[RMDB]
RNA sequence: GGGAACGACUCGAGUAGAGUCGAAAAGAAACGAAGGUUGGCUAAUACUGGUCGGACAUCAGGAGGUUAGUGCAAUCGCAUAAUCCAGCUUGACAACAAAAAGGAAAAAGAAAGAAGAAAAAGAAAAAUGAUAAUAGCCAUUCGUGGCUAUUAUCAUAAAAGAAACAACAACAACAAC
Reactivity to DMS in 0.01 (KOAc 150mM, MgCl2 10mM, bicine 150mM(pH8.5), 24C), signal-to-noise 3, nucleotides 027 to 126: g010a090a130a060c090g000a060a040g020g020u000u020g000g000c070u010a020a040u030a110c040u000g000g010u010c110g010g010a290c150a050u000c020a020g040g000a130g000g020u010u050a060g020u010g010c080a030a040u020c080g010c090a040u020a050a080u030c000c030a060g000c110u020u010g010a070c070a070a060c090a020a000a060a180a050g010g000a050a060a010a060a040g000a070a050a070g000a060a070g030a060a020a030a080a110g000a050a030a030a080
Reactivity to 2A3 in 0.01 (KOAc 150mM, MgCl2 10mM, bicine 150mM(pH8.5), 24C), signal-to-noise 3, nucleotides 027 to 126: g020a010a050a000c090g050a070a020g070g020u090u050g030g040c020u060a080a000u030a150c010u040g000g060u020c060g060g050a030c050a030u050c010a030g050g050a090g000g070u030u040a000g020u060g150c030a050a080u070c030g000c020a020u060a040a020u050c010c010a020g010c050u060u080g040a010c020a080a000c030a010a060a020a010a040g080g050a100a110a000a050a020g090a040a070a020g040a070a020g030a010a090a060a060a000g160a030a160a050a000

Chemical mapping of a 177-nucleotide RNA with DMS and 2A3. Conditions: 150 mM KOAc, 10 mM MgCl2 and 150 mM bicine (pH 8.5), 24 C.